About this RNA: The record gives the reactivity of an RNA of 177 nucleotides to DMS. For DMS the reverse transcriptase was MarathonRT. Conditions: 150 mM KOAc, 10 mM MgCl2 and 150 mM bicine (pH 8.5), 24 C. The DMS profile rests on 2,467 reads.
RNA sequence: GGGAACGACUCGAGUAGAGUCGAAAAGAUAUGGAGAGGAAACGAGAAGCUUGGAUUUAUACAGGACCGUAUGUCGGAAACGACAUACUAGUACUGUAUUGUCAGCUUCCGUUUCCUCUCCUAAGUCCACCUCUGUAUGGUUCGCCAUACAGAGGUGAAAAGAAACAACAACAACAAC
Reactivity to DMS in 0.01 (KOAc 150mM, MgCl2 10mM, bicine 150mM(pH8.5), 24C), signal-to-noise 2, nucleotides 027 to 126: g000a130u010a300u010g010g020a020g010a020g000g000a000a020a000c000g000a190g000a000a000g000c000u010u020g000g010a020u000u000u000a000u000a020c000a020g000g000a100c300c240g000u000a010u000g010u000c000g010g000a120a090a250c010g010a030c000a010u000a000c010u000a040g030u010a090c000u000g000u000a000u010u000g020u000c020a040g000c000u000u000c000c000g010u000u000u000c000c000u000c000u000c000c000u000a000a080g000u000c060